[RMDB]
The record gives the reactivity of an RNA of 207 nucleotides to DMS and 2A3.

RNA sequence: GGGAACGACUCGAGUAGAGUCGAAAAAGGUGAUUAGAUCAUGAGGGUGGAUUUCCCCAUUGCUGUUCUCAUGAUAGUGAGUAAGUUCUCACGAGAUCUAAUGGUUUAAAAGAGUGUGGCAUGUCCCCCUUAGCUCUCUCUCUCUCCUGCUCCACCAAUAACGUGAGCAAUUCGUUGCUCACGUUAUAAAAGAAACAACAACAACAAC
Reactivity to DMS in 0.01 (KOAc 150mM, MgCl2 10mM, bicine 150mM(pH8.5), 24C), signal-to-noise 1, nucleotides 027 to 156: a050g030g020u000g010a120u000u000a060g010a080u010c030a110u000g020a120g000g000g030u020g020g010a100u000u010u000c020c000c000c060a240u000u000g040c010u000g040u000u000c020u010c030a080u000g010a090u000a100g040u000g000a070g010u000a050a170g000u000u000c000u000c000a080c010g000a080g020a060u010c030u000a030a070u020g020g000u000u000u010a030a080a080a110g000a110g020u000g040u000g000g020c040a090u000g000u000c020c010c000c000c020u020u010a110g000c050u010c030u000c020u010c010u000c060u000c010u000c000c000u000g000c020u000c000c020a050c030c020a120
Reactivity to 2A3 in 0.01 (KOAc 150mM, MgCl2 10mM, bicine 150mM(pH8.5), 24C), signal-to-noise 2, nucleotides 027 to 156: a000g070g030u110g040a070u090u180a070g050a110u030c040a020u040g010a030g040g010g010u120g010g020a030u040u070u060c000c050c010c030a060u060u210g040c020u000g030u070u000c000u010c000a040u020g040a060u040a020g010u010g030a000g000u010a220a150g060u300u040c000u010c010a010c020g050a070g010a020u040c010u070a050a070u090g080g000u110u120u200a090a090a040a000g050a020g020u150g000u080g020g080c120a090u090g110u100c000c030c000c000c000u000u030a010g010c000u010c000u000c000u030c010u000c010u000c010u030c000c000u020g020c000u000c010c010a020c010c010a000
The data come from the RNA Mapping Database (RMDB), library OK3TST. The reactions ran in a buffer of 150 mM KOAc, 10 mM MgCl2 and 150 mM bicine (pH 8.5), at 24 C.